[RMDB]
RNA sequence: GGGAACGACUCGAGUAGAGUCGAAAAAAGCGUUUGGAUAAUACUUUCAGAAUUAUCAACUUAGAAUGAAGUCUGAUGUGUCUAAUUGGCACCACCGUUAGGUCAUGCUGCCUAGAAAGAGCAAAUACCCUUUCCUUCUUUUCGAAGAAGGAAAGGGAAAAGAAACAACAACAACAAC
Reactivity to DMS in 0.01 (KOAc 150mM, MgCl2 10mM, bicine 150mM(pH8.5), 24C), signal-to-noise 1, nucleotides 027 to 126: a140a010g040c070g020u010u030u000g010g000a050u020a100a070u000a160c030u010u010u000c090a040g010a140a020u000u000a060u010c030a060a060c140u010u010a180g010a080a080u000g010a030a060g010u000c040u010g000a010u000g000u010g000u000c040u010a080a090u030u010g000g000c020a080c080c070a090c090c080g010u000u000a020g020g000u000c090a020u000g000c080u000g020c000c010u010a100g000a080a050a030g010a060g010c080a020a080a150u000a180
Reactivity to 2A3 in 0.01 (KOAc 150mM, MgCl2 10mM, bicine 150mM(pH8.5), 24C), signal-to-noise 2, nucleotides 027 to 126: a040a000g000c010g040u040u050u090g020g050a030u020a150a040u050a160c030u040u020u130c070a030g060a140a070u070u070a050u130c000a050a050c050u120u100a080g160a300a140u100g020a040a000g010u050c010u040g010a060u030g040u010g000u000c010u050a130a020u060u130g050g020c000a000c060c010a020c010c030g160u090u090a010g030g030u010c010a040u110g000c030u040g000c040c010u060a040g170a040a130a010g040a020g000c010a010a070a110u220a120
Structure probing data (DMS and 2A3) for a 177-nucleotide construct. 2A3 adducts were read by reverse transcription with SuperScript II with manganese. The RNA was probed in 150 mM KOAc, 10 mM MgCl2 and 150 mM bicine (pH 8.5) at 24 C. For 2A3, 1,011 sequencing reads were counted. The DMS profile rests on 988 reads.